[RMDB]
RNA sequence: GGGAACGACUCGAGUAGAGUCGAAAACAUCGUUCUGUCGGAGAGCUCGUUGAAAAGGUAGUAUAUCGCGUCCGCACUGUAGCACUUUGUCCUCAUCAGGAACACGGGCUCGACAGACGCGCCAGAGAACGACGACGAACCCAGGUACAGCGCGGAACUACAUGGUGAAGUUCGCUUCACCAUGUAGAAAAGAAACAACAACAACAAC
Reactivity to 2A3 in 0.01 (KOAc 150mM, MgCl2 10mM, bicine 150mM(pH8.5), 24C), signal-to-noise 1, nucleotides 027 to 156: c060a060u090c020g040u060u040c040u080g070u060c020g050g110a060g000a010g070c010u010c020g020u070u230g060a080a110a020a010g090g040u090a060g050u060a130u070a110u220c070g040c010g080u040c020c010g040c020a030c030u020g010u040a020g130c020a020c100u070u130u080g020u060c000c010u090c050a280u080c110a020g020g020a050a030c020a000c000g000g010g000c000u000c020g000a010c010a010g030a010c040g000c020g010c060c000a060g000a010g000a110a030c020g020a000c040g020a010c060g010a070a070c020c000c000a000g110g030u040a000c000a000g000c000g010c000g000g010a000a020
Reactivity to DMS in 0.01 (KOAc 150mM, MgCl2 10mM, bicine 150mM(pH8.5), 24C), signal-to-noise 1, nucleotides 027 to 156: c020a120u010c000g060u000u010c010u020g000u000c010g010g010a300g030a010g020c010u010c040g050u010u000g000a030a040a150a070g040g060u000a160g000u000a110u000a040u000c010g010c060g000u010c000c000g000c010a020c070u040g020u000a030g000c060a120c070u020u000u000g020u000c000c050u000c100a180u000c040a080g060g000a050a140c120a050c010g050g000g000c000u000c010g030a180c040a080g040a020c040g010c020g010c010c040a100g040a140g000a060a150c030g000a040c050g000a160c050g010a010a190c000c000c000a140g020g020u000a010c090a010g020c000g020c010g000g000a090a210